The record gives the reactivity of an RNA of 207 nucleotides to DMS and 2A3.
For DMS the reverse transcriptase was MarathonRT.
For 2A3, 1,066 sequencing reads were counted.
Conditions: 150 mM KOAc, 10 mM MgCl2 and 150 mM bicine (pH 8.5), 24 C.
2A3 adducts were read by reverse transcription with SuperScript II with manganese.

RNA sequence: GGGAACGACUCGAGUAGAGUCGAAAAAGAGAAGGUCACGGCGAGACGAGCCGUUUAUCAUUACGAUAGGUGUCAAGUGGAAGUGCAGUGAUGUAUGCAGCUGAGGCAUCCUAACAGACCCACAGACUUGAACAAAAGCUGUCCGUUCGCGGACAGCACAGCUAUGGUUCUUCGGAACCAUAGCUGUAAAAGAAACAACAACAACAAC
Reactivity to DMS in 0.01 (KOAc 150mM, MgCl2 10mM, bicine 150mM(pH8.5), 24C), signal-to-noise 1, nucleotides 027 to 156: a030g030a130g070a100a030g010g010u000c150a090c070g000g000c020g000a270g030a160c120g000a220g000c030c030g000u010u000u000a030u000c070a080u000u020a080c020g010a090u010a010g030g000u030g060u000c040a040a050g070u000g020g010a030a130g000u000g000c030a060g020u010g020a100u040g070u020a030u000g030c060a160g030c010u000g000a090g060g010c060a020u000c040c020u000a120a110c090a100g010a190c020c010c010a030c080a030g000a110c040u000u000g000a150a300c080a150a000a040a070g030c000u000g000u000c000c020g000u000u010c240g000c010g000g000a000c000a000g020c000
Reactivity to 2A3 in 0.01 (KOAc 150mM, MgCl2 10mM, bicine 150mM(pH8.5), 24C), signal-to-noise 2, nucleotides 027 to 156: a000g150a000g040a130a040g030g020u090c060a030c020g000g030c000g010a120g020a130c100g070a030g000c000c020g000u000u010u010a020u030c030a070u030u240a070c100g080a090u040a040g020g000u030g030u000c020a050a060g010u050g080g020a100a070g080u000g010c040a000g030u070g140a120u110g000u060a030u090g060c120a040g030c040u070g010a060g010g000c000a040u080c030c000u020a060a030c030a030g080a050c000c010c040a040c070a060g080a070c030u070u150g030a100a040c060a050a080a070a000g000c000u000g000u000c000c000g040u020u080c230g000c010g070g030a000c000a000g010c010